[RMDB]
RNA sequence: GGGAACGACUCGAGUAGAGUCGAAAAAUGCCGCAUUCAGAGACGGUCACUCUAGUGGGCAACUGUCAAUCUAGCGUUGACAUCUACAUACUAUAUAGUAAUACCAAUACUCAAGACUACGAAACGGGCCCGGUAAUACCUUCGGGUAUUACCGGGCAAAAGAAACAACAACAACAAC
Reactivity to 2A3 in 0.01 (KOAc 150mM, MgCl2 10mM, bicine 150mM(pH8.5), 24C), signal-to-noise 1, nucleotides 027 to 126: a010u060g000c000c100g240c080a000u000u030c050a000g000a000g040a000c150g050g000u030c000a000c000u000c050u080a000g010u030g000g000g070c120a060a030c050u120g000u000c000a000a000u000c030u170a060g000c120g120u000u000g020a000c000a030u060c000u090a030c000a200u000a000c030u000a040u060a050u090a260g150u060a040a040u100a150c030c030a040a040u050a040c000u040c060a050a160g000a050c060u130a050c060g100a000a110a000c000g080g060

Source information
Structure probing data (2A3) for a 177-nucleotide construct. Values cover nucleotides 27 to 126.